An RNA of 207 nucleotides, treated with DMS and 2A3 and read out base by base.
RNA sequence: GGGAACGACUCGAGUAGAGUCGAAAAGUCGAAGAGUCUCAGCGAACUCCGCAGGCUUUCCUUGUGGAUCGCUGCUUCGGAGACACUGACCCUCUGGAUCAGCAUACGCUCUAUGGUCGCCAGGGCACCUGCGUCAAGUACCGCGGACAGUUCGGAGAAUUGGAUGUUAGUUCGCUAACAUCCAAUUAAAAGAAACAACAACAACAAC
Reactivity to DMS in 0.01 (KOAc 150mM, MgCl2 10mM, bicine 150mM(pH8.5), 24C), signal-to-noise 3, nucleotides 027 to 156: g010u000c030g000a120a100g020a120g030u000c050u010c040a210g030c010g000a080a060c050u000c020c000g050c030a150g020g030c050u020u000u000c060c000u010u000g030u010g010g020a120u010c030g000c020u000g000c120u010u000c040g000g010a270g020a110c070a080c030u010g010a090c040c010c000u010c120u020g080g030a050u000c020a000g020c060a110u000a100c100g000c040u000c020u000a080u010g020g010u000c000g030c040c050a120g010g000g020c300a080c030c020u000g000c030g030u000c040a050a090g000u000a050c050c000g040c060g010g000a090c020a120g030u000u010c000g000g010a300g010
Reactivity to 2A3 in 0.01 (KOAc 150mM, MgCl2 10mM, bicine 150mM(pH8.5), 24C), signal-to-noise 4, nucleotides 027 to 156: g060u030c010g010a020a000g050a040g080u020c040u010c130a000g020c000g030a060a070c050u000c020c010g000c010a010g000g040c080u140u100u130c040c000u050u030g030u060g070g030a040u060c040g000c010u000g010c010u020u020c000g030g020a020g000a020c050a050c090u100g060a080c010c040c020u010c030u020g040g030a050u020c010a020g000c040a050u090a230c100g040c060u020c040u110a130u200g020g010u040c000g000c040c030a020g020g030g010c020a020c040c020u000g000c030g020u040c010a040a020g030u050a100c030c030g000c020g010g010a020c010a060g050u040u020c010g020g030a100g070